Background
Conditions: 150 mM KOAc, 10 mM MgCl2 and 150 mM bicine (pH 8.5), 24 C. An RNA of 177 nucleotides, treated with 2A3 and DMS and read out base by base. For DMS the reverse transcriptase was MarathonRT. 2A3 adducts were read by reverse transcription with SuperScript II with manganese. For 2A3, 6,733 sequencing reads were counted.
RNA sequence: GGGAACGACUCGAGUAGAGUCGAAAAGGAGUGCUACCGAAAGGUAGCACUCCAACAAAUCGGUGUAAGUCGAGCCAGUCUUACACCGUGCGGCACAGCGGAAACGCUGAUGUCGUAUACACGGCUAGAUAAAUAGGGGUUUCGACCCCUAUUUAUCAAAAGAAACAACAACAACAAC
Reactivity to 2A3 in 0.01 (KOAc 150mM, MgCl2 10mM, bicine 150mM(pH8.5), 24C), signal-to-noise 2, nucleotides 027 to 126: g010g000a010g000u010g000c000u010a020c000c020g070a100a070a060g020g000u000a000g010c000a000c000u010c000c000a000a000c000a000a010a010u070c000g000g020u000g000u000a020a020g020u020c050g030a020g020c020c020a040g040u050c010u000u020a000c010a000c020c000g000u020g000c010g010g000c000a000c000a010g020c010g030g000a090a060a010c010g000c010u000g010a050u000g000u000c010g000u010a020u030a020c150a030c080g030g000c020u030a100
Reactivity to DMS in 0.01 (KOAc 150mM, MgCl2 10mM, bicine 150mM(pH8.5), 24C), signal-to-noise 4, nucleotides 027 to 126: g020g010a030g030u000g010c010u010a010c000c010g000a120a070a160g030g020u000a000g010c000a010c010u000c000c000a030a050c120a040a040a050u010c000g000g000u000g010u000a010a010g000u000c060g000a050g000c010c020a200g010u010c000u000u010a020c010a010c000c000g030u000g010c000g010g010c000a010c000a010g010c010g010g000a120a080a200c000g020c000u000g000a060u000g030u000c010g030u000a050u010a120c170a070c150g010g010c000u000a110